[RMDB]
RNA sequence: GGGAACGACUCGAGUAGAGUCGAAAAGAAAGGUGACAGAAUGAAGGGUAACGCAAUAUCCCCAGUGCCCUCUAAAGGUGUGGCUCAUGUGCACCUUGAACUCAGACUGGCGCUAAUUUUGGGAAUCUUUAUAGGUCACUCCCAGCCAGUUAAAAAAGGCUGGGUAUUAGUUCGCUAAUACCCAGCCAAAAGAAACAACAACAACAAC
Reactivity to 2A3 in 0.01 (KOAc 150mM, MgCl2 10mM, bicine 150mM(pH8.5), 24C), signal-to-noise 2, nucleotides 027 to 156: g010a010a120a000g010g000u060g040a030c000a040g240a220a240u190g060a100a100g000g020g000u050a090a000c020g020c070a010a090u000a050u090c010c000c030c000a000g020u000g010c000c030c020u110c060u150a160a080a010g070g020u030g010u040g060g000c010u080c090a050u260g020u060g130c030a030c030c030u020u020g020a030a000c010u000c110a000g030a180c000u000g000g000c000g030c090u180a180a250u100u260u230u240g000g000g000a020a030u010c020u010u290u030a260u270a280g000g000u020c000a000c050u000c000c020c000a000g000c000c000a000g070u160u160a000a050a130a000a000a160